RNA sequence: GGGAACGACUCGAGUAGAGUCGAAAAGCGAGCUGGGCCUGGCGGCCGACGAUAUCGUGGUCGGCUGCGUGGCGGUGAUGCGCGCCACCAAGGGGCACCGCGAACUCAUCGACGCCAUGCGGCCGCAGACCGUCCAGUACUUCGGUACUGGACGGUCAAAAGAAACAACAACAACAAC
Reactivity to DMS in 0.01 (KOAc 150mM, MgCl2 10mM, bicine 150mM(pH8.5), 24C), signal-to-noise 1, nucleotides 027 to 126: g010c030g040a130g010c030u000g000g000g030c010c030u000g010g000c190g020g000c050c000g010a060c050g000a130u000a110u000c000g030u000g010g000u010c120g020g020c000u000g010c080g040u010g000g000c000g010g020u020g010a020u010g000c120g000c010g030c070c010a070c070c120a150a050g030g010g050g020c160a070c200c120g000c010g020a250a050c150u050c040a040u000c030g000a100c000g000c000c000a020u000g010c030g000g050c000c000g010c060a070
Reactivity to 2A3 in 0.01 (KOAc 150mM, MgCl2 10mM, bicine 150mM(pH8.5), 24C), signal-to-noise 1, nucleotides 027 to 126: g010c020g010a020g000c040u100g050g080g030c000c000u050g110g000c110g050g000c060c010g030a040c070g070a070u050a050u150c100g040u040g060g060u060c000g000g000c050u020g010c010g020u000g000g020c050g010g020u070g000a040u070g040c000g010c000g000c040c000a050c000c060a170a160g110g010g020g000c090a030c070c020g030c000g010a100a040c040u070c130a000u000c020g040a000c020g030c020c020a010u020g090c000g040g000c000c030g000c010a020
The record gives the reactivity of an RNA of 177 nucleotides to DMS and 2A3. Values cover nucleotides 27 to 126. 2A3 adducts were read by reverse transcription with SuperScript II with manganese.